RNA sequence: GGGAACGACUCGAGUAGAGUCGAAAAGAGCCAGCAUUUUAUCUAAACCCCACUUUGUUUGUGUAAAUAGAGUGUGGAAUCUUGACUUUUGUGGGUGAGGAGGGUAGCAGAAAGUCAGUGGCAUGCCACUCCACCUAGUAUUCGUACUAGGUGGAGUAAAAGAAACAACAACAACAAC
Reactivity to DMS in 0.01 (KOAc 150mM, MgCl2 10mM, bicine 150mM(pH8.5), 24C), signal-to-noise 8, nucleotides 027 to 126: g010a140g010c040c040a070g020c070a070u010u010u000u000a070u010c090u010a060a110a180c100c010c020c010a020c020u000u000u000g020u000u000u000g020u020g010u010a020a010a020u000a020g000a010g010u000g020u010g020g010a120a090u010c070u010u000g010a060c070u000u000u000u000g020u000g000g010g010u000g010a120g010g000a110g000g010g020u010a070g010c080a080g000a040a050a060g000u000c050a050g020u000g000g010c060a070u000g010c090c110
Reactivity to 2A3 in 0.01 (KOAc 150mM, MgCl2 10mM, bicine 150mM(pH8.5), 24C), signal-to-noise 8, nucleotides 027 to 126: g060a020g050c030c020a010g020c040a080u050u120u100u200a120u100c070u100a050a100a130c000c010c010c000a010c010u020u020u030g050u050u040u040g300u050g090u170a010a020a010u020a020g020a000g010u030g020u100g030g040a030a030u030c050u040u110g040a060c010u020u050u050u090g050u080g040g030g050u140g040a060g030g050a060g020g000g010u030a040g000c010a010g070a050a060a010g020u020c020a010g020u050g040g000c030a020u070g030c000c010
An RNA of 177 nucleotides, treated with DMS and 2A3 and read out base by base.
The 2A3 profile rests on 13,281 reads.
For DMS, 17,245 sequencing reads were counted.
Values cover nucleotides 27 to 126.
It was measured as part of the RMDB library OK2TRN.